[RMDB]
RNA sequence: GGGAACGACUCGAGUAGAGUCGAAAAGUCGCACAGCUGGACCAUCAAGGAACACUUUCUUGUCACUGGUCCGAGGCCUGUGUAAGUGACACAGGCCUUGGAUAGCGUAUGUGGGAGCAAUGGCAAACAGGCUGCUUGGGUCCCCAGCCUCACCAGCCUAUAGUGAUGUAUUCGUACAUCACUAUAGAAAAGAAACAACAACAACAAC
Reactivity to 2A3 in 0.01 (KOAc 150mM, MgCl2 10mM, bicine 150mM(pH8.5), 24C), signal-to-noise 8, nucleotides 027 to 156: g070u050c030g020c060a040c020a050g000c020u060g000g020a030c010c010a020u060c040a040a040g060g020a100a060c080a060c250u080u100u040c010u030u050g030u040c030a030c080u050g030g000u000c000c000g000a000g000g000c000c000u010g000u000g010u070a110a090g150u170g110a000c000a000c000a000g000g000c000c000u000u010g010g010a030u070a030g020c040g040u090a070u180g040u070g010g040g010a050g030c040a060a140u060g050g000c020a060a080a060c050a080g050g010c010u020g000c020u070u080g050g000g020u030c010c010c000c000a010g020c000c000u000c000a040c020c020a010g040c000
Reactivity to DMS in 0.01 (KOAc 150mM, MgCl2 10mM, bicine 150mM(pH8.5), 24C), signal-to-noise 3, nucleotides 027 to 156: g010u000c040g020c060a110c060a080g050c020u010g010g010a120c020c030a070u000c070a090a080g010g000a070a140c090a050c050u010u010u010c020u000u000g010u000c020a050c050u000g050g060u000c000c010g010a020g030g010c000c000u000g040u000g020u000a090a150g020u010g030a300c000a020c010a030g020g010c010c000u000u000g000g000a050u000a040g000c040g010u000a070u000g020u000g020g000g020a080g030c030a070a070u000g020g000c050a080a070a210c070a100g020g020c010u000g010c030u000u010g010g000g010u000c010c020c030c020a100g010c010c010u000c060a070c040c020a070g000c060
Chemical mapping of a 207-nucleotide RNA with 2A3 and DMS. The reactions ran in a buffer of 150 mM KOAc, 10 mM MgCl2 and 150 mM bicine (pH 8.5), at 24 C. For 2A3, 11,241 sequencing reads were counted.